[RMDB]
RNA sequence: GGGAACGACUCGAGUAGAGUCGAAAAUGGGAAAUCGUAUACAUAUUUUAAUAUGCAUUGCAGCAUUCUACAUAACCAUCGCGGCUGCUAGGAAUGCCCCAAUGGAUCUCUGUUACGCCGACCCCAGAGAUACAUCACCACAACCCAUAGGACAUCCCCGCACUUACAUAUUCGUAUGUAAGUGCGGAAAAGAAACAACAACAACAAC
Reactivity to 2A3 in 0.01 (KOAc 150mM, MgCl2 10mM, bicine 150mM(pH8.5), 24C), signal-to-noise 2, nucleotides 027 to 156: u070g020g010g050a040a020a070u100c030g010u090a070u110a120c050a010u170a050u100u180u140u210a190a100u120a050u050g010c010a010u000u090g000c060a060g000c010a080u020u020c060u070a070c010a090u170a040a070c010c020a030u130c080g000c010g130g030c060u030g020c080u050a010g100g000a000a080u030g020c000c000c020c030a000a000u030g000g010a020u020c020u000c000u020g030u060u050a090c060g050c050c030g020a060c010c010c000c020a010g000a000g010a010u020a070c030a050u110c020a020c020c010a010c010a080a070c030c000c010a020u050a050g040g000a010c000a050u060c030c000